[RMDB]
RNA sequence: GGGAACGACUCGAGUAGAGUCGAAAAGGGGUCGUAGCGACCCUUGGAUUUACUUUUGACGCUCUGAAGCCUCCACGGAGCGAUAAGUUGUCAGGGUCGCAUACGACGGAGGCACCCAAAACCUAUUACUAAUGGGUUCGCCCAUUAGUAAUAGGAACAGUCUGUCAAUCUUCGGAUUGACAGACUGAAAAGAAACAACAACAACAAC
Reactivity to 2A3 in 0.01 (KOAc 150mM, MgCl2 10mM, bicine 150mM(pH8.5), 24C), signal-to-noise 2, nucleotides 027 to 156: g000g000g000g000u020c000g000u000a020g010c020g000a030c000c000c000u020u070g050g000a040u160u120u170a050c050u050u050u040u130g290a120c030g000c000u000c000u000g040a110a000g030c020c010u010c030c010a050c000g000g000a000g000c000g000a000u020a000a020g140u260u230g160u300c200a080g010g010g000u000c000g000c040a060u020a020c000g000a000c000g010g000a000g000g000c010a000c000c000c010a000a090a080a110c000c000u000a000u010u010a000c020u000a040a000u000g000g010g030u030u100c190g140c030c000c000a010u020u020a000g000u020a000a000u010a000g000g000a000a000